[RMDB]
RNA sequence: GGGAACGACUCGAGUAGAGUCGAAAAGCAGAGCUGGACAUGCUACCAGUGCCCGAGGAUGACUUCAUCCCUGACCUGGGAGGUGCUGCGGAGACCCCGGUCCCUGCGCCACAGCGGGCGGCUGGCGCGCCUCUCGGUAGUUCGCUACCGAGAGGCGAAAAGAAACAACAACAACAAC
Reactivity to DMS in 0.01 (KOAc 150mM, MgCl2 10mM, bicine 150mM(pH8.5), 24C), signal-to-noise 2, nucleotides 027 to 126: g010c020a100g020a170g030c030u000g010g010a120c060a090u010g000c050u000a160c030c020a030g010u000g020c000c020c020g000a080g000g000a050u000g020a270c180u010u000c040a040u010c010c020c040u010g000a080c100c020u000g000g000g000a100g010g010u000g000c020u000g010c060g000g010a100g000a120c030c040c020c080g010g000u000c010c000c020u010g010c010g020c060c050a050c100a120g000c040g010g000g020c060g010g000c060u000g000g010c120g020
Reactivity to 2A3 in 0.01 (KOAc 150mM, MgCl2 10mM, bicine 150mM(pH8.5), 24C), signal-to-noise 2, nucleotides 027 to 126: g000c030a000g010a010g120c040u110g020g060a070c050a140u160g080c030u070a080c000c040a020g050u050g050c010c000c000g050a100g010g000a030u050g040a120c100u170u040c240a050u030c000c000c020u070g160a120c020c020u040g010g030g030a090g000g010u040g030c010u030g010c020g060g010a040g040a050c000c000c000c020g030g010u010c000c000c010u020g020c000g000c040c030a080c010a000g000c040g030g020g000c050g020g000c040u000g020g040c030g010